[RMDB]
RNA sequence: GGGAACGACUCGAGUAGAGUCGAAAAGGUUAUUACCGGUCACUGCCACACCAUACGGUAAUAACCACCGAGAGGGAUGAUUAGGUGUGGAUACCAGUGCUAGCGUCAUUACCACCCCAUAGCUAGCACUGGAAGCGAAAGCGAUUAGCGGGGUGGAACCUAUGACUAUCUUCGGAUAGUCAUAGGUAAAAGAAACAACAACAACAAC
Reactivity to 2A3 in 0.01 (KOAc 150mM, MgCl2 10mM, bicine 150mM(pH8.5), 24C), signal-to-noise 7, nucleotides 027 to 156: g000g000u010u000a000u000u000a000c000c000g030g000u150c110a050c140u100g020c000c010a010c000a000c000c010a030u040a140c000g000g000u000a000a000u000a000a000c000c000a000c000c040g060a080g030a040g050g120g020a120u140g030a070u230u240a080g000g000u010g000u000g000g000a010u050a020c000c000a000g000u000g000c000u000a000g000c000g090u130c080a080u080u130a080c020c000a000c000c000c000c000a020u060a040g000c000u000a000g000c000a000c000u000g000g000a000a000g030c020g070a120a020a010g030c040g080a110u070u300a060g080c080g010g000g000g000u000g000g000a000
Reactivity to DMS in 0.01 (KOAc 150mM, MgCl2 10mM, bicine 150mM(pH8.5), 24C), signal-to-noise 1, nucleotides 027 to 156: g030g000u020u020a020u000u000a000c020c000g000g000u000c040a070c040u000g030c000c000a000c020a040c000c000a140u000a130c030g000g000u000a030a030u000a020a020c000c000a050c040c020g020a170g010a120g020g000g030a120u000g010a130u000u010a100g040g000u000g070u020g000g010a130u000a080c040c000a000g010u000g000c000u000a000g010c000g030u000c070a110u010u000a100c030c040a000c040c000c010c000a080u000a250g020c000u000a030g000c000a010c010u000g000g020a020a070g040c060g000a140a130a180g000c030g030a170u010u000a030g020c040g010g030g040g010u010g020g000a050

This 207-nucleotide RNA was probed chemically with 2A3 and DMS. For 2A3 the reverse transcriptase was SuperScript II with manganese. The reactions ran in a buffer of 150 mM KOAc, 10 mM MgCl2 and 150 mM bicine (pH 8.5), at 24 C. For 2A3, 8,624 sequencing reads were counted. Source: RMDB library OK3TST, as collected in RNAgym. Reactivities are given for positions 27 through 156. For DMS, 2,745 sequencing reads were counted. DMS (dimethyl sulfate) methylates the pairing face of unpaired adenines and cytosines.